[RMDB]
RNA sequence: GGGAACGACUCGAGUAGAGUCGAAAAAAUUGGUGAUAUCGUUGCGCCAAGUAUAAUUUUAGCGCAAGGAAUUGGACGCUGGGGUAACUUUAUGAAUCACGAGGCACAUGGUGGACCGGUGUCACGCCCUGUCGAUUCGUUUCGACGAAUCGACAGGAAAAGAAACAACAACAACAAC
Reactivity to 2A3 in 0.01 (KOAc 150mM, MgCl2 10mM, bicine 150mM(pH8.5), 24C), signal-to-noise 1, nucleotides 027 to 126: a000a010u140u110g140g000u090g090a020u060a140u030c080g040u010u060g000c080g000c030c000a000a000g220u040a040u030a200a230u010u130u130u060a020g060c020g000c020a080a000g040g030a000a000u060u070g040g010a000c000g020c040u000g010g000g000g010u020a030a030c000u100u170u000a150u250g100a040a000u080c000a030c250g010a040g000g250c050a020c050a040u090g010g050u060g010g200a000c000c000g030g000u000g040u000c000a000c000g080c000
Reactivity to DMS in 0.01 (KOAc 150mM, MgCl2 10mM, bicine 150mM(pH8.5), 24C), signal-to-noise 1, nucleotides 027 to 126: a010a000u000u000g000g010u010g000a090u000a090u020c000g010u000u000g000c000g000c000c030a000a060g050u030a060u000a030a060u030u030u000u000a000g100c000g000c030a030a080g010g010a000a100u060u030g000g000a150c050g100c000u010g010g010g000g000u000a100a000c120u030u000u000a110u050g000a180a140u040c150a110c080g000a030g000g090c190a060c020a060u010g000g030u000g100g000a100c060c030g000g000u000g000u010c030a150c070g000c060